[RMDB]
Conditions: 150 mM KOAc, 10 mM MgCl2 and 150 mM bicine (pH 8.5), 24 C. This 207-nucleotide RNA was probed chemically with 2A3. 2A3 adducts were read by reverse transcription with SuperScript II with manganese. The 2A3 profile rests on 439 reads.
RNA sequence: GGGAACGACUCGAGUAGAGUCGAAAAAGGCAGUUAGCGCUCUAGUUUUUUGUUCUUUGAUUGGCAUUGUUUUUUGCAAUCCUAUUACUAGAGUUAGCUUUAUUAAAGAUGUGAAUGUUACUGAGGGGGGCAAUGUGACACUGGUAGGUGUAGAGGGCUAGCAGCGUAAGUUCGCUUACGCUGCUAGAAAAGAAACAACAACAACAAC
Reactivity to 2A3 in 0.01 (KOAc 150mM, MgCl2 10mM, bicine 150mM(pH8.5), 24C), signal-to-noise 1, nucleotides 027 to 156: a000g060g020c050a040g070u080u060a010g010c000g020c000u020c000u000a040g000u000u030u020u040u040u040g220u240u200c150u300u190u100g060a070u040u070g130g080c120a020u030u060g210u230u140u140u070u140u090g000c010a010a000u010c000c000u030a050u030u070a010c020u000a010g000a030g000u030u010a020g000c000u000u130u030a120u030u130a120a060a010g040a010u040g000u090g070a040a030u120g020u020u150a030c020u050g050a080g020g100g010g020g010g000c010a020a020u070g020u050g020a000c000a000c060u050g020g000u000a020g000g010u040g010u000a060g000a000g000g000g000